Description
Chemical mapping of a 177-nucleotide RNA with DMS and 2A3. The DMS profile rests on 3,571 reads. It was measured as part of the RMDB library OK1LIB. DMS (dimethyl sulfate) methylates the pairing face of unpaired adenines and cytosines. The reactions ran in a buffer of 150 mM KOAc, 10 mM MgCl2 and 150 mM bicine (pH 8.5), at 24 C. The 2A3 profile rests on 8,296 reads. For DMS the reverse transcriptase was MarathonRT.

RNA sequence: GGGAACGACUCGAGUAGAGUCGAAAAGUCGUCGGUAGCAGUCUAGCUUCUUGCAGCCUUCUUCGGUGGUUUGGCUGCUUUCUUUCUUUCCACCGGCUAGUUUUCUUUUCUGCUAUCGACGACGAGAGGCUCCGGUCGCGUUCGCGCGAUUGGAGCCAAAAGAAACAACAACAACAAC
Reactivity to DMS in 0.01 (KOAc 150mM, MgCl2 10mM, bicine 150mM(pH8.5), 24C), signal-to-noise 2, nucleotides 027 to 126: g000u000c020g030u010c000g000g030u000a000g030c000a020g010u020c070u000a040g000c130u020u030c070u050u020g010c090a030g020c020c020u020u000c040u040u020c140g000g020u010g000g010u000u000u000g000g020c000u000g060c010u000u000u000c030u000u000u000c010u010u000u000c020c030a170c070c060g000g010c040u010a020g010u010u020u030u000c050u000u000u010u020c000u000g020c020u020a010u000c000g000a000c010g020a000c000g030a140g000a280
Reactivity to 2A3 in 0.01 (KOAc 150mM, MgCl2 10mM, bicine 150mM(pH8.5), 24C), signal-to-noise 7, nucleotides 027 to 126: g000u000c000g000u000c000g000g000u000a000g010c010a010g030u010c010u020a010g010c010u070u030c030u100u120g010c020a020g020c010c020u130u130c050u150u140c140g100g020u090g020g070u090u100u100g030g000c010u020g040c000u010u030u000c010u010u070u010c010u020u040u020c000c030a040c000c010g030g000c020u010a010g000u010u090u040u130c080u050u120u070u020c000u000g000c000u000a000u000c000g000a000c000g000a000c000g000a000g000a000